Description
The record gives the reactivity of an RNA of 177 nucleotides to 2A3. For 2A3, 480 sequencing reads were counted.
[RMDB]
RNA sequence: GGGAACGACUCGAGUAGAGUCGAAAAAGAUGCAGCUGAAGACCGAUGCAUCCAUAUGUUCGAAUUCGGUCACCAUUAGUCAUGCCUGGCUGGUGCUGGAUGCUAUCACAAUGAUGUUAUCAGCAAAGGGAUGGACUCGAUUCGUCGAGUCCAUCCCAAAAGAAACAACAACAACAAC
Reactivity to 2A3 in 0.01 (KOAc 150mM, MgCl2 10mM, bicine 150mM(pH8.5), 24C), signal-to-noise 1, nucleotides 027 to 126: a010g090a010u010g030c000a020g000c060u100g020a180a000g080a060c020c040g020a020u020g020c000a000u030c000c000a120u120a060u260g220u080u110c100g080a030a090u040u040c000g010g000u100c020a000c000c020a000u070u220a090g000u040c000a060u130g050c000c020u000g000g000c000u000g000g000u050g000c010u000g020g010a020u070g070c000u060a070u070c040a060c020a110a080u280g040a000u000g090u000u070a070u140c000a020g010c000a000a000a150
Source information
For 2A3 the reverse transcriptase was SuperScript II with manganese.